[RMDB]
RNA sequence: GGGAACGACUCGAGUAGAGUCGAAAAUGUGCUGGGCGACACGCGGGCUACAAUGGCCGAGACAGUGGGAUGCAACGCCGAAAGGCGACGCUAAUCUCCGAAACUCGGUCGUAGUUCGGAUUGCGGAUCACAUCUAAUACUUCGGUAUUAGAUGUGAAAAAGAAACAACAACAACAAC
Reactivity to 2A3 in 0.01 (KOAc 150mM, MgCl2 10mM, bicine 150mM(pH8.5), 24C), signal-to-noise 5, nucleotides 027 to 126: u130g020u040g030c020u070g000g060g050c020g020a020c020a010c120g120c030g000g000g010c000u000a000c030a070a210u300g010g000c000c010g010a010g020a020c060a030g040u300g060g010g000a000u030g010c010a040a000c010g000c000c000g010a050a030a020g000g000c010g010a010c050g000c010u080a060a020u010c010u000c000c000g030a080a070a050c000u000c010g010g000u000c000g000u000a010g000u010u010c020g000g050a080u040u100g030c030g020g040a030
Reactivity to DMS in 0.01 (KOAc 150mM, MgCl2 10mM, bicine 150mM(pH8.5), 24C), signal-to-noise 6, nucleotides 027 to 126: u010g010u010g010c040u000g000g010g020c050g020a090c070a050c110g030c020g020g000g010c000u000a010c020a140a120u010g010g000c000c000g000a010g010a050c130a090g020u020g010g000g010a020u000g000c020a070a300c010g000c000c000g010a080a110a150g000g010c000g010a030c300g000c020u010a050a040u000c010u000c000c010g010a080a120a070c010u000c000g000g000u000c000g010u000a010g010u000u000c010g010g010a160u000u000g010c040g010g000a150

Chemical mapping of a 177-nucleotide RNA with 2A3 and DMS. Values cover nucleotides 27 to 126. The RNA was probed in 150 mM KOAc, 10 mM MgCl2 and 150 mM bicine (pH 8.5) at 24 C.